[RMDB]
RNA sequence: GGGAACGACUCGAGUAGAGUCGAAAAUAACGUAGCCAUCGGCCUCGAAAUGGACAAAAAUGAGUCUUCGGUUCGUGCUCUCCUCGCUGAAGGUGCUGAAGAGAAGAAUGCGAAACUCAAGGUCACCGCGGAUAUGCUGCGUGAGCAGGUAGAUGCAGUCUCCACACUAGUUCGCUAGUGUGGAGACAAAAGAAACAACAACAACAAC
Reactivity to 2A3 in 0.01 (KOAc 150mM, MgCl2 10mM, bicine 150mM(pH8.5), 24C), signal-to-noise 2, nucleotides 027 to 156: u210a000a010c060g050u000a000g050c060c000a070u060c050g220g000c000c030u050c140g060a050a060a120u090g010g020a070c080a010a070a160a000a060u110g010a000g000u010c170u000u000c020g000g000u040u000c000g060u150g080c020u050c000u050c020c020u020c030g080c040u100g140a280a030g020g000u050g010c080u040g050a090a040g000a000g000a060a000g080a000a020u240g230c000g000a010a000a000c000u010c000a010a010g040g050u110c020a010c070c120g020c010g010g000a030u060a010u060g040c000u000g010c020g010u050g020a020g000c030a000g080g020u100a010g010a080u070g030c010a000
Chemical mapping of a 207-nucleotide RNA with 2A3. The reactions ran in a buffer of 150 mM KOAc, 10 mM MgCl2 and 150 mM bicine (pH 8.5), at 24 C. Source: RMDB library OK3TST, as collected in RNAgym.